Conditions: 150 mM KOAc, 10 mM MgCl2 and 150 mM bicine (pH 8.5), 24 C.
Chemical mapping of a 177-nucleotide RNA with 2A3 and DMS.

RNA sequence: GGGAACGACUCGAGUAGAGUCGAAAAGCGGUGCGUCAUCCCGGGGCUGCAAUGGUUUCGACGGGGCAUGAGGAGGGUGACUGAAGCCUGCUCGGUCAGAGCGAACCCGUAACAGCGAACAACAUCGAGAUCAUUCGUAAUUCGUUACGAAUGAUCUAAAAGAAACAACAACAACAAC
Reactivity to 2A3 in 0.01 (KOAc 150mM, MgCl2 10mM, bicine 150mM(pH8.5), 24C), signal-to-noise 7, nucleotides 027 to 126: g020c030g020g040u080g030c050g040u040c030a080u060c000c020c020g000g020g010g000c020u050g010c020a060a160u110g040g060u040u080u090c030g020a040c050g020g040g000g010c070a090u120g030a030g040g050a040g010g050g010u050g030a040c060u060g040a040a000g020c000c010u020g020c010u020c030g030g020u150c070a010g020a010g060c020g000a030a030c000c000c000g000u020a070a030c020a050g030c020g040a040a030c040a030a020c000a080u090c060g020
Reactivity to DMS in 0.01 (KOAc 150mM, MgCl2 10mM, bicine 150mM(pH8.5), 24C), signal-to-noise 6, nucleotides 027 to 126: g020c040g000g010u010g010c090g010u020c070a090u010c030c020c020g020g010g000g030c020u000g000c130a100a090u010g010g010u000u010u000c050g010a090c080g000g010g000g000c050a080u010g010a100g010g000a110g000g000g010u000g010a100c110u010g010a070a130g000c020c010u010g000c020u000c020g010g000u010c090a090g000a120g000c030g000a040a090c020c000c020g010u010a060a100c100a080g010c020g000a080a070c060a060a060c140a060u020c120g010